[RMDB]
RNA sequence: GGGAACGACUCGAGUAGAGUCGAAAACAGGGGUAGCUUCUGGCUCAAGCGUGACAACAGUCGCGCAGCCCGCUGCAGAGAUAGCCAGCACGAAGCCGGCAGCACCCAAGCUGCCUACAGCUGCGAGUGAGCAACAGAAUUUCGAUUCUGUUGCUCAAAAAGAAACAACAACAACAAC
Reactivity to DMS in 0.01 (KOAc 150mM, MgCl2 10mM, bicine 150mM(pH8.5), 24C), signal-to-noise 3, nucleotides 027 to 126: c120a150g020g010g010g010u010a090g020c040u000u000c030u010g000g040c020u000c180a150a110g010c000g010u000g010a010c010a150a200c300a150g000u000c000g010c020g010c010a120g020c070c040c240g000c020u000g000c070a160g000a160g020a060u010a040g000c070c030a030g000c110a150c150g010a060a070g020c010c110g000g000c020a010g010c000a070c020c050c010a040a090g010c010u000g010c030c030u000a050c110a140g020c010u000g000c070g010a160g010
Reactivity to 2A3 in 0.01 (KOAc 150mM, MgCl2 10mM, bicine 150mM(pH8.5), 24C), signal-to-noise 2, nucleotides 027 to 126: c030a030g070g000g000g020u060a060g010c000u020u000c000u030g020g000c010u030c040a080a050g000c010g060u000g030a010c010a300a040c050a230g020u000c000g000c010g000c010a020g000c000c020c010g030c010u030g000c010a060g020a000g030a200u110a050g070c090c020a000g010c000a020c090g090a060a000g000c010c000g020g000c000a000g000c000a040c000c020c000a020a030g000c000u020g020c000c040u080a080c010a040g010c000u090g050c030g020a020g120